[RMDB]
An RNA of 177 nucleotides, treated with DMS and 2A3 and read out base by base. For 2A3 the reverse transcriptase was SuperScript II with manganese. It was measured as part of the RMDB library TTRDES.
RNA sequence: GGGAACGACUCGAGUAGAGUCGAAAAGAUAUGGAAUUUAUAGACAUGCUGAUGGGUCGGAAACGACCCUACCAGCAACAGCUAUUGAUUCCUAAGUCAAAGCCCUUGGGGUUCGCCCCAAGGGCAACAAACAAUCACUGUUCGCAGUGAUUGUUUGAAAAGAAACAACAACAACAAC
Reactivity to DMS in 0.01 (KOAc 150mM, MgCl2 10mM, bicine 150mM(pH8.5), 24C), signal-to-noise 2, nucleotides 027 to 126: g000a020u000a020u020g000g020a020a000u000u000u000a000u000a020g010a020c020a300u000g020c000u000g000a100u000g000g010g010u000c000g010g000a010a010a040c000g020a020c010c000c000u010a010c110c000a000g040c010a080a040c220a050g000c000u000a000u000u010g000a000u000u000c000c010u000a010a140g010u000c000a110a180a200g020c010c000c000u000u000g000g030g020g020u000u010c240g010c010c010c000c000a000a010g000g020g020c000a010a010
Reactivity to 2A3 in 0.01 (KOAc 150mM, MgCl2 10mM, bicine 150mM(pH8.5), 24C), signal-to-noise 1, nucleotides 027 to 126: g000a000u020a010u070g000g000a000a000u010u000u000a010u010a020g030a040c140a200u300g000c010u000g000a020u020g000g000g000u020c000g000g020a010a010a000c000g000a010c000c020c000u010a030c090c010a000g000c100a060a040c080a040g000c010u020a010u000u040g010a010u010u010c010c010u000a020a000g010u010c030a070a140a130g010c000c000c000u000u000g020g010g000g000u070u140c250g130c040c000c040c000a000a000g000g020g010c000a000a000
Conditions: 150 mM KOAc, 10 mM MgCl2 and 150 mM bicine (pH 8.5), 24 C.